[RMDB]
RNA sequence: GGGAACGACUCGAGUAGAGUCGAAAAUUUUGGGCAGAUAACAACUGUUACGCGUCUUGCCACUCUAUUGUAAACACUACAACAAAUUUUAAGUUUAAUACACCUACGCGACAAGAUGAAUCGGAAACGUUAUGAUUUGGUUCGCCAAAUCAUAACGAAAAGAAACAACAACAACAAC
Reactivity to 2A3 in 0.01 (KOAc 150mM, MgCl2 10mM, bicine 150mM(pH8.5), 24C), signal-to-noise 2, nucleotides 027 to 126: u070u090u050u130g040g010g050c010a000g000a050u090a190a060c040a000a100c090u000g050u070u040a050c070g020c010g060u000c010u060u100g000c000c000a050c010u050c000u000a100u040u060g010u000a000a070a040c030a030c090u130a030c040a130a010c010a070a210a090u110u170u050u220a160a040g030u090u020u000a100a050u110a040c030a040c020c020u070a010c100g000c000g030a010c040a020a020g060a070u100g010a120a050u080c030g040g090a000a100a040
Reactivity to DMS in 0.01 (KOAc 150mM, MgCl2 10mM, bicine 150mM(pH8.5), 24C), signal-to-noise 2, nucleotides 027 to 126: u000u010u000u010g010g010g000c000a040g000a030u000a080a120c150a100a150c050u000g000u000u000a110c050g000c060g000u000c000u000u000g010c000c020a040c070u010c090u010a080u010u000g000u000a010a080a090c100a060c090u000a010c150a040a060c070a030a070a190u030u000u000u000a050a140g000u000u000u010a040a080u000a120c090a030c080c060u000a040c080g000c010g030a020c050a040a030g000a050u000g010a050a140u000c050g000g010a100a040a170
The record gives the reactivity of an RNA of 177 nucleotides to 2A3 and DMS. For DMS, 980 sequencing reads were counted. The RNA was probed in 150 mM KOAc, 10 mM MgCl2 and 150 mM bicine (pH 8.5) at 24 C. Source: RMDB library M2PK90, as collected in RNAgym.